Structure probing data (2A3 and DMS) for a 177-nucleotide construct.
For DMS, 1,786 sequencing reads were counted.
Reactivities are given for positions 27 through 126.
[RMDB]
RNA sequence: GGGAACGACUCGAGUAGAGUCGAAAAGGAGUACUCUUCGGAGUACUCCAGCUACCGAGAAUCUUCCUCGGUAUAUAAAUGAAACCCUUGGAAACAAGGGAAAUACGGCAGGGUUCGCCCUGCCGAACUAAUGCUCACGAUUCGUCGUGAGCAUUAGAAAAGAAACAACAACAACAAC
Reactivity to 2A3 in 0.01 (KOAc 150mM, MgCl2 10mM, bicine 150mM(pH8.5), 24C), signal-to-noise 2, nucleotides 027 to 126: g000g030a030g040u070a010c020u010c010u050u080c300g050g010a010g000u010a000c010u000c000c000a000g000c010u010a000c000c000g030a000g010a060a150u090c090u140u110c100c000u000c020g030g000u000a020u000a000u010a110a030a000u080g100a070a080a050c000c000c000u000u010g040g000a050a020a020c010a010a000g000g000g020a000a040a030u030a000c000g000g020c000a000g030g020g020u040u100c120g070c010c000c010u000g030c000c000g000a010a010
Reactivity to DMS in 0.01 (KOAc 150mM, MgCl2 10mM, bicine 150mM(pH8.5), 24C), signal-to-noise 2, nucleotides 027 to 126: g000g000a010g000u000a000c000u010c010u000u020c190g000g020a010g000u010a010c000u000c000c000a060g010c160u000a010c010c000g000a020g000a100a170u000c160u010u000c100c000u000c010g000g000u010a010u020a030u010a050a050a070u000g000a150a130a080c000c000c000u000u000g000g000a180a150a210c000a010a020g000g020g000a000a040a180u010a090c040g010g020c000a000g000g000g010u010u000c250g030c010c000c010u000g000c000c000g000a000a050